Background:
An RNA of 177 nucleotides, treated with 2A3 and DMS and read out base by base. Source: RMDB library M2PK90, as collected in RNAgym.

RNA sequence: GGGAACGACUCGAGUAGAGUCGAAAAUAAAAUGGUAAGAACGGUUCCAAAGGAGCCGAAGGUCAUAGCUAUGGCAUCGAUCUAAAAUCUUAUCAAUUAGGUGACGAGCUUGGCACAGAUCAAAAAAUACACAAGUUAUCUUCGGAUAACUUGUGUAAAAAGAAACAACAACAACAAC
Reactivity to 2A3 in 0.01 (KOAc 150mM, MgCl2 10mM, bicine 150mM(pH8.5), 24C), signal-to-noise 2, nucleotides 027 to 126: u170a010a050a020a060u070g040g020u040a030a040g000a100a010c010g010g000u010u000c030c020a180a160a220g010g000a010g010c020c000g020a050a030g030g000u000c010a030u080a090g040c000u060a070u270g110g000c010a020u070c050g010a000u000c000u060a040a090a120a060u050c020u060u090a050u060c010a050a140u050u060a060g020g030u030g030a020c020g000a000g010c030u000u060g040g000c030a020c030a060g040a060u030c050a020a040a080a040a060a040
Reactivity to DMS in 0.01 (KOAc 150mM, MgCl2 10mM, bicine 150mM(pH8.5), 24C), signal-to-noise 2, nucleotides 027 to 126: u000a050a100a170a050u000g010g000u000a020a040g010a140a250c030g010g010u000u020c000c020a120a150a230g000g010a020g020c010c010g000a020a010g000g000u000c000a050u000a150g010c020u010a050u000g010g020c010a040u000c070g010a000u000c030u000a000a060a140a130u000c060u020u000a060u010c140a050a100u000u000a050g000g000u000g000a050c000g020a140g000c030u000u000g000g020c030a030c120a050g000a010u010c020a000a010a060a070a090a130